[RMDB]
RNA sequence: GGGAACGACUCGAGUAGAGUCGAAAACCGUCAGUGUCCGAUAGGGUACUGAUUGUGAUGACGACUAGAAAGUCAGCGGGUGGAAGCAUCUGUGCGUGGGUUAGGUAGCCUCAUAUACAUGAACGACCACUACCGACAAGUUCGCUUGUCGGUAGUGAAAAGAAACAACAACAACAAC
Reactivity to 2A3 in 0.01 (KOAc 150mM, MgCl2 10mM, bicine 150mM(pH8.5), 24C), signal-to-noise 5, nucleotides 027 to 126: c010c000g000u000c000a010g000u010g040u000c000c010g060a220u240a300g000g020g000u010a010c000u000g010a000u020u090g060u040g060a080u110g010a020c030g030a020c020u020a050g080a130a120a030g030u050c040a020g040c030g040g020g020u030g010g040a030a030g070c010a040u010c050u100g030u040g030c020g000u130g030g000g010u040u010a020g010g070u040a030g020c000c020u050c030a030u100a010u030a080c100a080u150g050a100a010c070g020a010c010
Reactivity to DMS in 0.01 (KOAc 150mM, MgCl2 10mM, bicine 150mM(pH8.5), 24C), signal-to-noise 4, nucleotides 027 to 126: c020c010g010u010c000a010g010u000g000u030c000c000g010a180u050a100g020g010g030u010a010c010u000g000a020u010u010g010u010g010a100u020g010a090c080g010a070c050u010a080g000a100a100a090g000u020c010a080g000c030g010g020g010u010g020g010a140a080g010c060a060u030c040u000g000u000g000c070g020u020g010g010g010u010u000a060g000g010u000a040g000c040c010u000c050a050u040a090u010a040c130a080u010g000a080a100c070g000a100c120
This 177-nucleotide RNA was probed chemically with 2A3 and DMS. The data come from the RNA Mapping Database (RMDB), libraries RFM100 and RFMREP. For DMS the reverse transcriptase was MarathonRT.